[RMDB]
RNA sequence: GGGAACGACUCGAGUAGAGUCGAAAAAUAAGUUUGGCAAAGCUCGUGUCUAUUAUGAGAGCAUGUCUUACCAGGAGCAAGAUGAACUUUUUGCCAUGACAAAGCGUAACGUCAUUCCUACCAUGACCAGGAACCCCGUUCGCGGGGUUCAAAAGAAACAACAACAACAAC
Reactivity to DMS in 0.01 (KOAc 150mM, MgCl2 10mM, bicine 150mM(pH8.5), 24C), signal-to-noise 2, nucleotides 027 to 129: a170u070a040a170g020u000u040u000g060g010c000a010a150a180g000c030u060c010g020u000g000u030c020u040a100u000u000a130u040g060a080g000a070g020c100a080u070g050u000c090u050u000a130c060c020a120g010g030a190g020c120a000a000g020a030u070g000a000a000c100u010u010u000u050u080g020c090c070a050u000g010a060c060a020a110a130g020c050g020u000a100a070c090g030u060c000a120u060u090c010c020u070a210c060c000a140u000g040a000c030c050a040g010
Reactivity to 2A3 in 0.01 (KOAc 150mM, MgCl2 10mM, bicine 150mM(pH8.5), 24C), signal-to-noise 4, nucleotides 027 to 129: a000u160a040a010g090u010u010u020g020g020c000a000a020a040g000c000u010c010g060u050g020u020c060u020a180u180u190a170u260g050a050g000a000g000c030a010u020g030u010c000u000u020a080c030c040a050g000g080a070g030c000a030a030g020a060u080g030a030a120c030u050u000u030u070u140g010c000c040a060u080g000a030c010a020a040a020g080c030g100u090a000a060c040g020u010c040a000u050u070c010c000u000a020c000c010a030u050g050a030c030c000a000g030
Source information:
Chemical mapping of a 170-nucleotide RNA with DMS and 2A3. 2A3 adducts were read by reverse transcription with SuperScript II with manganese. The RNA was probed in 150 mM KOAc, 10 mM MgCl2 and 150 mM bicine (pH 8.5) at 24 C. It was measured as part of the RMDB library 15KLIB. For DMS the reverse transcriptase was MarathonRT.